[RMDB]
Conditions: 150 mM KOAc, 10 mM MgCl2 and 150 mM bicine (pH 8.5), 24 C. Structure probing data (2A3 and DMS) for a 207-nucleotide construct. 2A3 adducts were read by reverse transcription with SuperScript II with manganese. The DMS profile rests on 3,056 reads. Reactivities are given for positions 27 through 156. Source: RMDB library RNAMAK, as collected in RNAgym.
RNA sequence: GGGAACGACUCGAGUAGAGUCGAAAAGCGUACUACGGUGUUUCACUUCGUUGAAAUAGCGAACUACAUGGAUCCCAAAUAGGAUCCAUGCGCUAUGGAGAAGUGAUACACCGUAUCGCAAAAGUCGAUGAGAAGGCUUCGGCCUUCUCAUCGACAACAUCAAACGAAUGUUCGCAUUCGUUUGAUGAAAAGAAACAACAACAACAAC
Reactivity to 2A3 in 0.01 (KOAc 150mM, MgCl2 10mM, bicine 150mM(pH8.5), 24C), signal-to-noise 3, nucleotides 027 to 156: g010c000g050u100a060c050u010a000c010g000g000u020g020u000u040u010c000a000c010u010u000c020g300u290u080g030a030a040a000u010a010g010c010g030a090a050c040u080a040c270a000u000g000g010a010u010c020c050c050a180a290a160u240a100g000g000a000u020c010c000a000u000g000c000g000c010u010a000u000g000g000a040g000a010a000g000u030g010a000u050a000c050a000c060c000g000u010a000u010c010g020c000a000a000a000a120g010u010c010g010a020u010g020a000g000a000a010g010g020c050u090u160c280g050g000c030c010u000u010c000u020c000a020u000c000g000a000c000a000a010
Reactivity to DMS in 0.01 (KOAc 150mM, MgCl2 10mM, bicine 150mM(pH8.5), 24C), signal-to-noise 1, nucleotides 027 to 156: g020c040g010u010a060c120u000a010c020g010g000u000g000u010u000u000c000a020c000u000u000c000g030u020u020g020a210a160a020u000a000g000c030g000a130a300c010u010a130c000a010u000g000g010a000u000c000c000c010a060a130a230u020a080g010g000a000u000c000c010a020u000g040c030g030c020u000a000u000g010g010a290g000a020a020g020u000g010a020u000a000c010a020c020c020g010u000a000u020c040g000c030a060a030a070a140g020u000c000g020a010u010g020a020g000a030a030g030g030c010u000u020c300g100g000c000c000u000u000c000u000c000a020u000c000g000a000c020a020a080